[RMDB]
RNA sequence: GGGAACGACUCGAGUAGAGUCGAAAAGAUAUGGAGACUUGCGGGAGGUUUCCCGGUGCAAUGACGUUUCUCGGAAACGAGAAAUAAGACAGCACCGAACAACCUUUGAUCGCAAGUCUCCUAAGUCGAUCUCUAACAGGUUCGCCUGUUAGAGAUCAAAAGAAACAACAACAACAAC
Reactivity to 2A3 in 0.01 (KOAc 150mM, MgCl2 10mM, bicine 150mM(pH8.5), 24C), signal-to-noise 2, nucleotides 027 to 126: g020a050u060a030u140g000g010a020g000a010c000u000u000g010c010g000g000g000a020g010g030u020u040u130c000c070c050g030g000u020g000c120a300a300u100g010a030c010g010u010u000u010c010u010c000g000g000a070a040a020c000g000a000g010a030a000a000u050a030a010g110a070c050a050g050c010a010c000c000g010a070a010c080a010a000c020c000u260u300u070g060a060u050c010g000c030a000a010g000u000c000u000c000c000u000a020a000g020u000c040
Reactivity to DMS in 0.01 (KOAc 150mM, MgCl2 10mM, bicine 150mM(pH8.5), 24C), signal-to-noise 3, nucleotides 027 to 126: g000a060u000a220u000g000g010a020g010a020c000u000u000g000c020g030g000g000a010g050g000u000u000u010c260c180c050g000g020u010g020c020a190a150u010g000a190c300g000u000u000u000c000u000c010g000g000a040a030a110c000g010a040g000a000a010a010u000a230a120g010a150c140a100g020c000a010c000c000g000a080a090c270a050a020c000c000u010u000u010g010a050u000c000g010c030a000a000g000u010c000u000c000c000u000a000a040g010u000c030
Chemical mapping of a 177-nucleotide RNA with 2A3 and DMS. The RNA was probed in 150 mM KOAc, 10 mM MgCl2 and 150 mM bicine (pH 8.5) at 24 C.